[RMDB]
About this RNA
The record gives the reactivity of an RNA of 177 nucleotides to DMS and 2A3. Source: RMDB library OK2TRN, as collected in RNAgym. The DMS profile rests on 9,655 reads.
RNA sequence: GGGAACGACUCGAGUAGAGUCGAAAAUCUGUUUACUAGUUAUCGUUAAGUCCAACUCUGACUACGAUUCCGUAAACAGAAGCCAGUUUGCGUCAAGUCCGAGUUGGACUCUAGGCAGAACUGAUCACUACUCGUAUGAAUUCGUUCAUACGAGUAGAAAAGAAACAACAACAACAAC
Reactivity to DMS in 0.01 (KOAc 150mM, MgCl2 10mM, bicine 150mM(pH8.5), 24C), signal-to-noise 7, nucleotides 027 to 126: u000c020u000g010u000u000u000a100c040u000a050g010u010u000a090u010c200g010u000u000a100a050g010u000c000c040a020a030c050u000c020u000g000a020c000u010a110c150g010a080u010u010c230c070g020u000a000a010a020c020a060g010a100a100g020c170c120a100g010u000u000u010g020c010g010u000c090a120a030g000u000c000c100g000a040g010u010u000g000g000a000c000u000c020u000a050g010g010c060a060g000a030a090c080u000g000a090u000c160a240
Reactivity to 2A3 in 0.01 (KOAc 150mM, MgCl2 10mM, bicine 150mM(pH8.5), 24C), signal-to-noise 6, nucleotides 027 to 126: u020c010u020g040u040u130u100a100c040u020a030g100u130u100a150u250c120g060u080u170a100a010g000u010c000c000a010a010c020u000c010u030g000a010c000u050a090c110g070a080u150u040c070c020g010u000a010a000a000c010a030g090a070a010g080c030c010a040g000u000u010u010g020c020g020u050c060a030a000g000u000c000c010g030a050g030u020u040g010g000a000c000u000c000u010a000g000g000c000a010g010a050a030c030u060g040a070u120c040a010
Conditions: 150 mM KOAc, 10 mM MgCl2 and 150 mM bicine (pH 8.5), 24 C.